An RNA of 177 nucleotides, treated with DMS and 2A3 and read out base by base. For 2A3 the reverse transcriptase was SuperScript II with manganese. DMS adducts were read by reverse transcription with MarathonRT. The DMS profile rests on 730 reads.

[RMDB]
RNA sequence: GGGAACGACUCGAGUAGAGUCGAAAAGAAGAGCCGGGCUAACAAAGGUGGGAGGCACCCAACCCUUCGCAAGAGCCGAGUGGGAAGGCUAAGCGAAACCAAGACAAAAUCGUUAUAAAUAAUGCAAGCUUCUCAAACUAUUCGUAGUUUGAGAAGCAAAAGAAACAACAACAACAAC
Reactivity to DMS in 0.01 (KOAc 150mM, MgCl2 10mM, bicine 150mM(pH8.5), 24C), signal-to-noise 1, nucleotides 027 to 126: g000a120a200g010a050g020c000c150g070g020g030c060u020a030a110c110a100a040a020g010g010u020g010g000g000a070g010g000c080a080c000c000c050a080a110c050c040c040u040u000c030g000c010a000a140g030a040g050c020c030g020a080g020u000g010g000g000a110a200g000g010c050u000a020a270g000c000g000a020a040a140c160c100a020a050g010a100c120a020a020a060a130u020c070g020u000u000a080u000a030a050a040u000a130a050u030g040c180a060a130
Reactivity to 2A3 in 0.01 (KOAc 150mM, MgCl2 10mM, bicine 150mM(pH8.5), 24C), signal-to-noise 1, nucleotides 027 to 126: g080a000a000g020a000g000c020c030g000g020g050c060u130a100a040c010a120a080a020g050g000u000g040g010g000a040g000g000c000a060c000c000c000a020a050c020c020c000u050u020c040g000c090a120a050g000a010g180c040c030g000a080g000u140g060g030g030a010a070g020g000c010u010a090a000g000c010g000a020a000a000c040c020a110a060g090a100c050a010a080a070a010u060c020g010u020u070a200u050a230a100a060u130a110a020u080g180c070a010a080